[RMDB]
RNA sequence: GGGAACGACUCGAGUAGAGUCGAAAAGGAAGCGGCUACGAAGACGAAAAUUGCUAGUGUUCAGUGCGCUAGUGCUGAUUUAACGUCCAGUUUUUGCUUUAGGUGUUGCAGGGUUUGGCGCUAGCUAGCUUGCUCCUUUUUUCGAAAAGGAGCAAGCAAAAGAAACAACAACAACAAC
Reactivity to DMS in 0.01 (KOAc 150mM, MgCl2 10mM, bicine 150mM(pH8.5), 24C), signal-to-noise 2, nucleotides 027 to 126: g020g000a010a070g010c030g010g010c040u010a050c030g030a050a120g060a050c070g010a070a050a040a060u010u000g010c080u000a030g020u010g020u000u020c190a110g020u000g020c060g020c120u000a060g020u000g010c150u010g000a030u000u000u000a070a080c040g020u000c170c040a120g000u020u010u010u000u000g010c020u010u000u000a060g020g000u000g000u010u000g030c060a080g010g000g000u000u000u000g030g020c000g010c080u000a080g010c080u020a070